[RMDB]
RNA sequence: GGGAACGACUCGAGUAGAGUCGAAAAACAGCAGCAGCAGCUUCAGCAGAUCUAUCAGCACCACGGGACGCCGGAGCGUAGUUGAGAAUCACUGCAUGCUGCGACAUUAAUGGGCAGCACCGGCGGAACUCACUGGGAGGUUCGCCUCCCAGUGAGUAAAAGAAACAACAACAACAAC
Reactivity to DMS in 0.01 (KOAc 150mM, MgCl2 10mM, bicine 150mM(pH8.5), 24C), signal-to-noise 2, nucleotides 027 to 126: a070c060a100g000c030a040g000c040a080g000c020a050g010c030u000u010c080a060g000c010a050g010a120u000c080u030a130u000c070a040g000c020a070c050c020a050c110g000g000g020a120c050g010c000c020g000g020a170g000c110g010u000a010g010u000u000g000a080g000a160a160u000c030a100c020u000g020c060a160u030g000c010u000g040c010g010a080c020a070u020u000a100a110u000g000g000g000c030a020g000c000a210c020c020g010g020c010g000g010a110
Reactivity to 2A3 in 0.01 (KOAc 150mM, MgCl2 10mM, bicine 150mM(pH8.5), 24C), signal-to-noise 1, nucleotides 027 to 126: a000c040a020g040c000a010g000c010a000g000c000a000g020c000u070u020c030a030g010c030a000g000a130u060c020u060a040u040c030a000g020c010a020c050c000a000c040g080g020g030a010c000g030c010c000g000g000a050g080c070g010u020a000g000u020u080g090a100g070a120a100u210c060a010c010u050g010c000a030u030g000c000u040g000c020g020a000c020a000u120u190a180a100u130g030g070g030c010a000g020c000a030c030c030g000g000c010g030g000a000
About this RNA:
The data come from the RNA Mapping Database (RMDB), library OK2TST. An RNA of 177 nucleotides, treated with DMS and 2A3 and read out base by base. The reactions ran in a buffer of 150 mM KOAc, 10 mM MgCl2 and 150 mM bicine (pH 8.5), at 24 C. Reactivities are given for positions 27 through 126. Reactivities are rounded to 0.1 and cut off at 0 and 3.